[RMDB]
RNA sequence: GGGAACGACUCGAGUAGAGUCGAAAAUCCGCCUCCCGAGAGGGGACGAGUGAGGCUUAUCCCGGGGAAUUCGACUUAUCGUCCCCACUUAGCAGCUCCCGGACUCCCUUCAAAAAGGGAACCGGGGACUAGGAUUACACUUCGGUGUAAUCCUAGUAAAAGAAACAACAACAACAAC
Reactivity to DMS in 0.01 (KOAc 150mM, MgCl2 10mM, bicine 150mM(pH8.5), 24C), signal-to-noise 1, nucleotides 027 to 126: u000c050c040g000c010c020u000c020c020c020g040a110g020a100g050g020g000g000a000c020g040a060g000u000g020a030g010g010c030u020u020a030u010c050c130c150g000g000g000g030a300a090u000u000c040g020a030c040u000u000a090u010c010g010u010c010c000c000c000a070c030u000u000a070g030c170a120g030c100u020c000c020c000g010g000a180c110u010c000c010c000u000u000c170a050a050a210a060a060g000g000g000a010a040c000c000g000g020g000g000
This 177-nucleotide RNA was probed chemically with DMS.
It was measured as part of the RMDB library VIROID.
Reactivities are given for positions 27 through 126.
For DMS the reverse transcriptase was MarathonRT.
DMS (dimethyl sulfate) methylates the pairing face of unpaired adenines and cytosines.